[RMDB]
RNA sequence: GGGAACGACUCGAGUAGAGUCGAAAAGAUAUGGAUCUGCACGAGGCAACUCAUACUCGGAAACGAGUAUGCUCUGAACUACCUCGCGCAGAUCCUAAGUCAAAAGACGCAUGUUCGCAUGCGUCAACCAACUGUUCUACUUCGGUAGAACAGUUGGAAAAGAAACAACAACAACAAC
Reactivity to DMS in 0.01 (KOAc 150mM, MgCl2 10mM, bicine 150mM(pH8.5), 24C), signal-to-noise 2, nucleotides 027 to 126: g000a020u000a300u020g000g010a000u000c000u000g000c000a030c000g020a000g030g040c070a090a110c120u010c000a010u000a010c000u000c030g000g000a060a050a080c000g010a010g040u000a000u000g020c250u000c090u010g010a080a100c300u070a170c030c010u000c010g010c040g030c010a010g000a000u000c000c000u000a000a030g000u000c030a080a070a080a100g000a030c010g020c000a010u030g040u000u030c160g000c030a000u000g000c000g010u010c000a020a120
Reactivity to 2A3 in 0.01 (KOAc 150mM, MgCl2 10mM, bicine 150mM(pH8.5), 24C), signal-to-noise 2, nucleotides 027 to 126: g000a000u020a020u060g000g000a010u000c000u000g030c020a000c030g050a020g150g000c190a060a050c020u010c030a000u020a010c000u000c000g000g030a040a010a010c000g000a010g020u000a000u000g000c020u030c090u120g170a210a150c100u240a290c190c010u000c010g000c000g020c000a000g010a000u000c000c000u000a000a000g000u020c000a000a040a060a150g010a000c000g010c000a000u010g030u060u140c300g000c130a000u010g000c000g000u000c010a020a000
About this RNA
Structure probing data (DMS and 2A3) for a 177-nucleotide construct. DMS adducts were read by reverse transcription with MarathonRT. The reactions ran in a buffer of 150 mM KOAc, 10 mM MgCl2 and 150 mM bicine (pH 8.5), at 24 C. It was measured as part of the RMDB library TTRDEL.